This 177-nucleotide RNA was probed chemically with 2A3 and DMS. It was measured as part of the RMDB library M2PK50. For DMS, 947 sequencing reads were counted. Conditions: 150 mM KOAc, 10 mM MgCl2 and 150 mM bicine (pH 8.5), 24 C.
[RMDB]
RNA sequence: GGGAACGACUCGAGUAGAGUCGAAAAUCCUCACGUUUCGACGUGAGGAGAACUCUAGCAAGGGAAGGGAACCCUCGGGAACGGCUCCCAAGGCGAUCUCAACAAGGGCCAAAUUCGUUUGGCCCAACAAUCUCCAGCUGUUCGCAGCUGGAGAUUGAAAAGAAACAACAACAACAAC
Reactivity to 2A3 in 0.01 (KOAc 150mM, MgCl2 10mM, bicine 150mM(pH8.5), 24C), signal-to-noise 1, nucleotides 027 to 126: u000c000c000u000c000a000c000g000u030u070u100c140g120a000c000g000u030g000a000g000g000a000g010a020a020c020u010c040u050a020g090c060a090a030g120g000g060a170a000g040g020g060a080a100c020c000c000u020c020g050g010g000a120a080c090g150g000c030u030c010c000c000a000a000g070g040c060g020a130u030c050u030c000a000a160c050a050a190g040g000g020c020c030a020a020a020u050u020c090g070u060u010u030g000g000c000c000c000a000a010
Reactivity to DMS in 0.01 (KOAc 150mM, MgCl2 10mM, bicine 150mM(pH8.5), 24C), signal-to-noise 2, nucleotides 027 to 126: u000c000c000u020c000a000c010g000u020u000u010c200g000a010c000g030u000g020a000g000g010a000g000a110a100c030u000c010u000a040g040c110a140a120g020g000g010a080a100g000g010g000a070a080c040c030c000u010c060g070g000g000a060a080c200g040g000c170u000c020c030c010a040a080g000g020c050g000a080u010c010u000c020a060a100c230a110a090g050g010g010c000c000a020a010a020u000u060c150g010u000u000u000g010g040c000c000c000a000a080